[RMDB]
RNA sequence: GGGAACGACUCGAGUAGAGUCGAAAAUACUCAGGAGGCUGAGACAGGAGAAUUGCUUGAAUCCAGGAGGCGGAGGUUGCAAUGAGCUGAGAUGGCGCCACUGCACUCUAGCUUGGGCAACAAAGUGAAUACAGACGAGAUUCGUCUCGUCUGUAUUAAAAGAAACAACAACAACAAC
Reactivity to 2A3 in 0.01 (KOAc 150mM, MgCl2 10mM, bicine 150mM(pH8.5), 24C), signal-to-noise 2, nucleotides 027 to 126: u070a010c000u000c020a000g000g070a050g100g020c030u030g020a010g010a080c050a010g060g040a050g050a120a110u110u070g030c020u040u040g040a060a020u050c030c000a030g000g040a020g010g060c010g000g070a010g010g070u070u040g030c050a110a170u060g010a030g000c020u040g010a030g020a130u130g100g000c030g010c050c050a080c060u070g010c050a060c040u060c020u020a000g000c000u010u030g020g000g000c000a030a020c030a050a110a030g170u170g130
Reactivity to DMS in 0.01 (KOAc 150mM, MgCl2 10mM, bicine 150mM(pH8.5), 24C), signal-to-noise 5, nucleotides 027 to 126: u010a090c040u000c030a080g010g010a080g020g010c050u010g010a050g000a110c090a050g010g010a070g010a070a070u000u000g000c040u000u000g010a110a090u000c040c050a060g000g000a080g000g020c060g010g010a050g000g000u000u000g010c040a050a090u010g010a090g000c010u000g010a080g010a080u000g010g010c020g010c080c100a040c120u000g010c030a060c020u000c020u000a040g010c020u000u000g000g010g010c030a020a030c070a050a050a070g020u010g000
An RNA of 177 nucleotides, treated with 2A3 and DMS and read out base by base. For DMS, 6,010 sequencing reads were counted. It was measured as part of the RMDB library OK2TRN. Conditions: 150 mM KOAc, 10 mM MgCl2 and 150 mM bicine (pH 8.5), 24 C.